The record gives the reactivity of an RNA of 207 nucleotides to 2A3. Reactivities are rounded to 0.1 and cut off at 0 and 3. The reactions ran in a buffer of 150 mM KOAc, 10 mM MgCl2 and 150 mM bicine (pH 8.5), at 24 C. The 2A3 profile rests on 536 reads. The data come from the RNA Mapping Database (RMDB), library OK3TST.

[RMDB]
RNA sequence: GGGAACGACUCGAGUAGAGUCGAAAAAUUCGUGCGCGAAGGUGUACGUUAGCGAGAUUGCAGACUUAAACGUCGGGAUCUGCUGCUCUUUAUCGUCAGACAAACACUGAUAAGUGUAAUACUGCUGCUCGCCGCCGUCCUGACCAAUCUCCUGUACGGAUCACGUUAUCUUCGGAUAACGUGAUCCAAAAGAAACAACAACAACAAC
Reactivity to 2A3 in 0.01 (KOAc 150mM, MgCl2 10mM, bicine 150mM(pH8.5), 24C), signal-to-noise 1, nucleotides 027 to 156: a000u130u060c000g000u020g000c010g020c000g070a100a030g070g000u050g000u030a000c000g040u040u010a080g000c070g070a000g020a020u000u090g070c030a000g020a190c030u220u300a110a090a040c060g010u050c000g000g000g020a080u080c020u000g010c020u020g020c010u050c030u070u190u230a150u070c100g130u070c060a000g010a050c110a080a140a000c050a000c020u020g000a180u190a300a000g050u000g030u050a010a010u040a120c030u020g060c000u020g010c080u050c030g010c010c000g000c010c000g000u000c000c000u000g030a070c000c020a000a000u020c000u000c010c010u030g020u040a030c040